[RMDB]
RNA sequence: GGGAACGACUCGAGUAGAGUCGAAAAGCAUCGAUACGCUGGGCUGUGAAUUUAGCGGUGCUACCCACCGAUUCUGAAGCGCGCACGGAAUCGAGGCACACGCUAAACACAGCCUGUGCUGAAGCGCGCACGGCAACCGAAAGGUGCGAGGCAUACGGACUUACUAUAGCUUCGGCUAUAGUAAGUCAAAAGAAACAACAACAACAAC
Reactivity to 2A3 in 0.01 (KOAc 150mM, MgCl2 10mM, bicine 150mM(pH8.5), 24C), signal-to-noise 6, nucleotides 027 to 156: g030c010a070u130c060g130a080u100a220c050g000c050u080g000g010g000c000u000g020u030g070a300a300u040u010u010a000g010c010g010g000u000g000c000u060a080c060c070c040a060c040c010g000a010u010u000c010u030g070a200a040g000c000g000c000g000c010a010c000g000g010a000a000u000c000g000a010g000g000c000a010c000a030c010g010c000u000a010a000a010c010a000c000a000g000c000c000u000g000u000g000c000u010g030a130a020g000c000g000c000g000c010a020c010g020g000c000a010a040c030c010g070a110a050a030g020g000u020g000c010g030a070g100g000c050a080u220a170c230g090
Reactivity to DMS in 0.01 (KOAc 150mM, MgCl2 10mM, bicine 150mM(pH8.5), 24C), signal-to-noise 3, nucleotides 027 to 156: g030c000a110u000c060g020a180u010a060c090g030c030u000g000g000g000c030u010g010u000g000a110a270u000u020u000a000g030c000g030g010u010g000c000u000a000c040c020c040a300c070c000g020a020u000u000c010u010g000a070a050g000c000g040c020g010c000a300c020g030g000a010a050u000c010g000a150g010g000c000a070c000a090c010g000c000u000a050a030a090c030a040c020a040g000c020c020u000g000u000g000c030u000g010a080a120g010c010g010c030g040c010a300c010g010g000c010a060a190c030c020g040a080a120a110g010g050u000g000c040g040a020g010g030c060a130u010a070c050g040
Conditions: 150 mM KOAc, 10 mM MgCl2 and 150 mM bicine (pH 8.5), 24 C. This 207-nucleotide RNA was probed chemically with 2A3 and DMS. The DMS profile rests on 4,023 reads. DMS adducts were read by reverse transcription with MarathonRT.